[RMDB]
RNA sequence: GGGAACGACUCGAGUAGAGUCGAAAAGAUAUGGACGUCCGAUCCUACGCGACGCUAUGGAGGAAACUCGGAAACGAGUUUCUACCCACCCAUAGAACUACGUCCGUAGGAUCGGACGUCCUAAGUCGAGUACACUUUCGUUCGCGAAAGUGUACUCAAAAGAAACAACAACAACAAC
Reactivity to DMS in 0.01 (KOAc 150mM, MgCl2 10mM, bicine 150mM(pH8.5), 24C), signal-to-noise 1, nucleotides 027 to 126: g020a050u000a300u000g000g000a000c010g000u000c000c000g010a040u000c000c000u010a030c000g000c300g040a010c020g000c010u000a000u010g010g010a220g020g010a030a000a000c000u000c000g040g000a060a080a250c000g000a010g000u000u020u000c000u000a020c080c090c040a300c080c000c000a000u000a000g000a120a010c250u020a300c030g000u000c010c000g080u000a000g020g000a000u000c000g040g000a000c010g000u000c030c000u000a000a040g000u000c130